[RMDB]
RNA sequence: GGGAACGACUCGAGUAGAGUCGAAAACACAAUUCUCUAAGCGAUGAGAAGCGGGUGGAAAAUUAGGGAAGGGCUACGGCUAUAAUCCUAAGAAAGCUUAUCUACAAGCGGAGGUAUUCUCAGAACGAAAACCAUUUGGCGUUCGCGCCAAAUGGAACACUUUUAGCUUGUUCGCAAGCUAAAAGUGAAAAGAAACAACAACAACAAC
Reactivity to 2A3 in 0.01 (KOAc 150mM, MgCl2 10mM, bicine 150mM(pH8.5), 24C), signal-to-noise 2, nucleotides 027 to 156: c100a000c010a070a130u100u040c020u010c020u100a150a090g060c040g060a060u040g020a060g000a040a030g030c040g010g030g020u100g040g000a090a070a080a140u060u070a100g000g020g020a060a050g060g010g000c020u040a020c130g030g000c000u020a030u050a160a070u050c000c020u010a010a040g050a070a050a000g000c020u050u040a040u090c040u090a080c050a110a020g000c030g020g010a040g010g020u060a110u130u030c040u000c010a060g040a100a020c060g030a040a070a060a070c010c000a020u010u000u000g010g000c010g000u040u050c190g020c010g000c090c000a010a000a000u010g000g000a010a000
Reactivity to DMS in 0.01 (KOAc 150mM, MgCl2 10mM, bicine 150mM(pH8.5), 24C), signal-to-noise 1, nucleotides 027 to 156: c040a040c040a140a120u000u000c010u020c030u020a130a200g000c060g000a170u000g000a090g000a020a060g000c090g000g000g060u000g000g000a030a080a050a150u020u000a160g010g010g010a120a120g040g000g040c020u000a060c130g010g000c030u020a050u000a070a100u000c050c040u000a000a040g000a080a030a190g010c030u020u000a020u000c070u000a090c030a120a070g010c030g000g040a080g000g010u000a090u000u010c010u000c040a090g030a150a080c060g000a140a100a070a180c000c010a070u000u000u000g010g000c000g000u010u000c300g010c020g000c000c000a000a010a010u010g000g000a040a090